[RMDB]
RNA sequence: GGGAACGACUCGAGUAGAGUCGAAAAGAGUCUUCGGACUCAGAUUCGGGGUCUGAGCUAAUACUGUAGUACGAAGAACACCUGAAGCCUCCACGGGUGGGAGUACGCAGAUAGGAUAACUCAGACGGAGGCACCCUGUCAGACGAUUCGUCGUCAAACAACGAUACUUCUUCGGAAGUAUCGUUGUAAAAGAAACAACAACAACAAC
Reactivity to 2A3 in 0.01 (KOAc 150mM, MgCl2 10mM, bicine 150mM(pH8.5), 24C), signal-to-noise 1, nucleotides 027 to 156: g000a000g000u060c060u070u060c210g110g000a000c000u010c020a000g080a190u180u280c110g020g050g000g000u020c000u020g000a020g030c130u150a060a070u030a140c010u040g060u070a300g000u000a130c040g100a300a000g000a060a000c030a000c000c000u050g030a150a050g000c000c010u000c000c010a030c000g010g000g000u000g020g000g000a040g010u000a000c000g040c000a010g040a160u030a050g150g060a100u160a230a060c000u020c010a000g060a120c050g000g000a000g000g000c030a010c010c010c010u060g190u170c100a110g000a010c000g000a030u030u030c130g070u000c000g010u000c010a030a160

The record gives the reactivity of an RNA of 207 nucleotides to 2A3. Conditions: 150 mM KOAc, 10 mM MgCl2 and 150 mM bicine (pH 8.5), 24 C. It was measured as part of the RMDB library RNAMAK.